[RMDB]
RNA sequence: GGGAACGACUCGAGUAGAGUCGAAAAAAACUUUUGUGACUUGCUGAAACGGGACUAAUCUCCUCACCGAGGCUAAGCAAGUAAAAUACGCCUCUCAUAUCCUUACCUGAGUGUGGUAAGGAAAUAACCUGCAACGCUUCCUUCGGGAAGCGUUGAACCAAGUAUUCCAGUUCGCUGGAAUACUUGGAAAAGAAACAACAACAACAAC
Reactivity to 2A3 in 0.01 (KOAc 150mM, MgCl2 10mM, bicine 150mM(pH8.5), 24C), signal-to-noise 2, nucleotides 027 to 156: a000a000a020c250u290u150u100u170g120u040g030a040c000u010u000g000c000u040g040a020a080a140c080g000g000g010a010c080u090a070a130u080c030u010c050c020u050c040a040c020c090g000a010g040g040c060u040a010a010g000c000a000a020g090u150a050a020a030a030u100a090c020g010c020c000u010c000u000c050a030u030a060u180c000c000u010u010a000c000c000u110g050a120g120u100g080u090g040g000u000a000a000g010g030a020a000a000u020a010a030c010c100u070g020c010a010a000c000g000c010u010u010c000c000u010u020c140g090g000g010a000a000g000c000g000u000u000g000a000a010
Chemical mapping of a 207-nucleotide RNA with 2A3.
The data come from the RNA Mapping Database (RMDB), library M2RFPK.
2A3 adducts were read by reverse transcription with SuperScript II with manganese.